[RMDB]
RNA sequence: GGGAACGACUCGAGUAGAGUCGAAAACAGCAAAAAGGAACCGAUUCCCACCAAGUUCGGAAAGAGAUACCGGGCGAGGCGCUGAAGAAAGAAUCUCGCUUCAGACACCCCAAGGACUCGACUGAGGAAUGCACGCCAUCGUUCGCGAUGGCGUGAAGAGAAUAGGCGUGUUCGCACGCCUAUUCUCAAAAGAAACAACAACAACAAC
Reactivity to 2A3 in 0.01 (KOAc 150mM, MgCl2 10mM, bicine 150mM(pH8.5), 24C), signal-to-noise 1, nucleotides 027 to 156: c030a030g130c030a000a110a060a000a110g090g050a130a090c100c060g050a100u010u010c100c000c000a010c000c030a070a050g060u090u120c010g080g000a090a030a130g040a090g030a070u070a090c000c010g020g020g000c220g020a110g060g040c090g060c140u010g000a010a010g020a030a180a000g060a060a060u090c150u080c300g020c020u110u010c000a040g080a110c010a150c030c010c010c010a030a160g050g010a090c030u000c020g030a060c110u080g050a050g000g100a050a030u110g040c000a000c000g000c000c000a000u000c000g070u090u030c110g000c000g110a000u010g010g130c020g000u000g000a000a000
This 207-nucleotide RNA was probed chemically with 2A3. For 2A3 the reverse transcriptase was SuperScript II with manganese. The RNA was probed in 150 mM KOAc, 10 mM MgCl2 and 150 mM bicine (pH 8.5) at 24 C. Values are in units of 0.01, from 0 to 300, in steps of 10.